Structure probing data (2A3 and DMS) for a 207-nucleotide construct.
Source: RMDB library M2RFPK, as collected in RNAgym.
The 2A3 profile rests on 1,750 reads.
The reactions ran in a buffer of 150 mM KOAc, 10 mM MgCl2 and 150 mM bicine (pH 8.5), at 24 C.
2A3 adducts were read by reverse transcription with SuperScript II with manganese.
RNA sequence: GGGAACGACUCGAGUAGAGUCGAAAAGCUUAAUAACCUGCGCUGAGCCCUUCUCCCCCAGCUUGCCUGUCUCCUAGGGAAUUGGAAGGUCAUCCUUCACAGGAUCGUGUGGAAGUCCUGCUCGGGGUCCAAACAUGGUAAUUCGUUACCAUGUUAACAUUUUCAUUCCUUUCGAGGAAUGAAAAUGAAAAGAAACAACAACAACAAC
Reactivity to 2A3 in 0.01 (KOAc 150mM, MgCl2 10mM, bicine 150mM(pH8.5), 24C), signal-to-noise 2, nucleotides 027 to 156: g000c010u130u130a110a000u100a170a220c040c070u120g020c040g030c090u050g020a030g010c010c010c000u060u040c110u040c030c010c000c010c010a000g000c010u010u060g020c000c000u030g080u060c030u010c050c030u050a030g010g000g080a030a060u070u060g050g010a050a000g010g020u050c030a100u100c010c010u050u050c020a020c010a120g030g010a050u010c070g060u080g000u020g120g050a050a030g010u010c000c000u000g000c020u010c000g000g000g010g010u020c030c030a020a010a020c000a010u000g000g000u000a000a000u060u040c030g010u020u000a000c000c000a010u000g000u000u000a010a000
Reactivity to DMS in 0.01 (KOAc 150mM, MgCl2 10mM, bicine 150mM(pH8.5), 24C), signal-to-noise 2, nucleotides 027 to 156: g000c050u010u000a080a080u010a070a070c020c020u000g010c060g020c020u000g010a110g010c030c020c050u000u000c030u010c010c010c030c010c010a080g000c030u000u010g000c030c010u020g010u000c020u000c030c040u000a100g030g020g010a080a080u000u000g020g020a070a070g070g020u000c070a110u010c000c010u000u010c080a080c040a040g020g030a060u000c050g000u020g010u010g030g010a110a140g010u000c040c010u010g000c080u000c030g020g030g030g000u000c020c030a100a020a020c000a030u000g010g030u000a010a060u000u000c280g020u000u000a010c000c000a010u000g020u000u000a040a170